[RMDB]
RNA sequence: GGGAACGACUCGAGUAGAGUCGAAAAAGGGAGAGCUAGGCCAGUUCUUCACAUCGUCAUCAAUUUGCAUUUUCAUGGCAUCAUUAUUCAAUGAGCUUAAAGGUGAUAUUAGUUUACUGGACCCUGGCCCAUAUCAUAUUUUCGAAUAUGAUAUGGGAAAAGAAACAACAACAACAAC
Reactivity to DMS in 0.01 (KOAc 150mM, MgCl2 10mM, bicine 150mM(pH8.5), 24C), signal-to-noise 9, nucleotides 027 to 126: a090g010g010g010a070g000a080g010c030u000a050g010g010c050c030a130g010u000u000c050u000u000c090a090c110a080u010c140g010u000c020a020u000c050a050a170u000u000u010g010c060a100u000u010u010u010c110a080u000g000g010c090a110u000c050a030u000u000a120u010u010c160a040a040u000g010a070g000c030u000u000a030a050a230g010g010u000g010a040u000a090u010u010a080g010u000u000u000a050c050u000g000g000a130c060c010c010u000g010g010
Reactivity to 2A3 in 0.01 (KOAc 150mM, MgCl2 10mM, bicine 150mM(pH8.5), 24C), signal-to-noise 9, nucleotides 027 to 126: a000g070g010g010a100g010a010g020c020u070a030g030g060c010c010a010g010u030u010c010u070u050c020a040c010a100u110c070g050u010c010a020u010c010a060a130u060u070u190g070c040a060u090u060u060u210c080a070u110g060g000c020a090u030c010a010u040u140a090u160u100c020a020a030u030g010a010g010c010u060u110a100a050a020g020g010u020g020a010u010a080u110u080a030g040u040u060u080a060c020u020g040g020a050c010c000c000u020g050g010
Conditions: 150 mM KOAc, 10 mM MgCl2 and 150 mM bicine (pH 8.5), 24 C. Chemical mapping of a 177-nucleotide RNA with DMS and 2A3. Source: RMDB library OK2TRN, as collected in RNAgym. For DMS, 39,006 sequencing reads were counted.